[RMDB]
RNA sequence: GGGAACGACUCGAGUAGAGUCGAAAAACACCGGAUAUACGUAUCCGGUGAGAGACUGGGGUGCUGGGCUCCCCUAGACUAGGACUCCAGUGCCCUCCUCUCCAGUCGCUCGUUACGACGAGCGACAGUUUGUUAUCCCCUUCGGGGGAUAACAAACAAAAGAAACAACAACAACAAC
Reactivity to DMS in 0.01 (KOAc 150mM, MgCl2 10mM, bicine 150mM(pH8.5), 24C), signal-to-noise 2, nucleotides 027 to 126: a090c060a050c000c000g000g000a000u000a000u010a060c150g000u020a000u000c000c000g030g010u000g010a000g000a000g020a090c250u060g030g030g000g020u000g000c000u010g000g050g010c300u000c040c020c020c130u000a040g000a140c300u090a200g000g000a080c000u000c000c000a010g060u000g000c000c000c000u000c040c020u000c000u000c000c190a070g000u000c000g020c000u050c000g040u010u020a070c230g020a030c000g020a010g000c000g000a000c010a030
Reactivity to 2A3 in 0.01 (KOAc 150mM, MgCl2 10mM, bicine 150mM(pH8.5), 24C), signal-to-noise 5, nucleotides 027 to 126: a000c020a010c000c000g000g000a000u010a000u010a030c260g060u010a000u000c000c000g000g000u020g010a000g000a000g000a010c300u300g000g000g000g010u000g010c000u000g000g010g010c010u020c000c000c000c030u060a050g060a190c100u080a030g000g010a000c010u000c010c000a000g000u000g010c000c000c010u020c010c000u020c000u010c010c020a010g010u010c000g000c000u000c000g010u010u060a140c300g010a000c000g000a100g000c000g000a000c000a000

Description
Conditions: 150 mM KOAc, 10 mM MgCl2 and 150 mM bicine (pH 8.5), 24 C. This 177-nucleotide RNA was probed chemically with DMS and 2A3. For 2A3, 4,377 sequencing reads were counted. Values cover nucleotides 27 to 126. The data come from the RNA Mapping Database (RMDB), library RFM100. For 2A3 the reverse transcriptase was SuperScript II with manganese.